[RMDB]
RNA sequence: GGGAACGACUCGAGUAGAGUCGAAAAAGUGCACUAGGUACGCCUAGUGCACAUUCCAGGACAUAUUGCUGAGGAUGUCAAAAAUGCAGUUGGAGUCCUCAACUGGAUAGGCUACGGCCUAUCCAGAAAAAGACUUGGUUGUUCGCAACCAAGUCAACAUAACAGCUCUGUUCGCAGAGCUGUUAUGAAAAGAAACAACAACAACAAC
Reactivity to DMS in 0.01 (KOAc 150mM, MgCl2 10mM, bicine 150mM(pH8.5), 24C), signal-to-noise 2, nucleotides 027 to 156: a160g000u000g000c000a000c000u000a020g020g010u000a100c300g050c020c000u000a000g010u010g020c000a010c000a010u010u020c000c010a210g040g000a160c050a140u010a030u000u000g030c020u000g000a090g000g000a030u000g000u010c040a010a080a110a120a140u000g000c150a160g020u000u000g000g000a180g000u000c010c000u000c010a070a160c010u000g000g000a010u010a010g010g010c000u000a090c300g130g030c010c000u000a000u010c000c000a030g000a000a040a070a170a150g000a020c000u010u000g020g010u000u000g000u000u000c280g040c000a010a030c000c000a000a000g010u000c000a010a080
Reactivity to 2A3 in 0.01 (KOAc 150mM, MgCl2 10mM, bicine 150mM(pH8.5), 24C), signal-to-noise 1, nucleotides 027 to 156: a010g000u000g000c000a010c000u000a010g000g010u040a070c160g080c000c010u010a030g000u000g040c010a000c000a000u000u000c000c000a000g050g040a040c070a140u290a070u120u180g040c100u070g000a020g010g030a060u050g250u300c100a060a050a040a050a000u270g030c070a060g050u070u110g060g040a060g030u000c000c000u000c000a010a030c000u000g000g000a000u000a000g010g010c000u030a020c230g050g010c000c000u000a000u000c000c010a000g010a000a000a000a000a000g000a000c000u000u010g000g020u020u010g010u050u170c170g030c090a000a010c000c010a000a000g000u020c010a000a000